Structure probing data (DMS and 2A3) for a 177-nucleotide construct. The DMS profile rests on 12,931 reads. Reactivities are given for positions 27 through 126. For 2A3, 4,964 sequencing reads were counted.
RNA sequence: GGGAACGACUCGAGUAGAGUCGAAAAUACUCAAAACCAGGUGGCUCCCCUUUCAACCAUUCUCUCACUUGGUUGCUCUCUUAUGGUCAUAUUUCUCUGACAUAGUGGCUCUUAGAAGUGCUUACUCAUAUUAGGACGUGUUCGCACGUCCUAAUAUAAAAGAAACAACAACAACAAC
Reactivity to DMS in 0.01 (KOAc 150mM, MgCl2 10mM, bicine 150mM(pH8.5), 24C), signal-to-noise 5, nucleotides 027 to 126: u030a060c050u010c040a110a050a090a070c040c040a040g020g020u010g000g010c050u000c020c010c020c060u010u020u040c120a090a120c080c050a080u030u020c070u000c040u000c040a060c070u000u000g000g020u010u010g010c050u020c040u000c010u000u020a050u010g010g010u000c030a070u000a060u010u020u010c030u000c040u010g000a040c110a090u020a090g010u000g000g020c010u000c040u010u020a090g000a060a090g000u020g000c040u000u010a050c070u000c140
Reactivity to 2A3 in 0.01 (KOAc 150mM, MgCl2 10mM, bicine 150mM(pH8.5), 24C), signal-to-noise 6, nucleotides 027 to 126: u080a010c000u030c080a050a050a060a060c020c020a020g000g050u030g070g010c020u070c010c020c000c020u020u150u120c070a080a060c040c010a070u100u040c050u020c010u020c030a040c040u030u040g010g000u030u050g020c000u000c000u010c010u090u080a040u150g010g030u010c010a020u000a130u130u090u030c080u010c050u060g040a060c010a040u110a040g060u050g050g000c010u000c020u050u070a030g020a140a020g050u040g050c010u060u080a050c010u020c100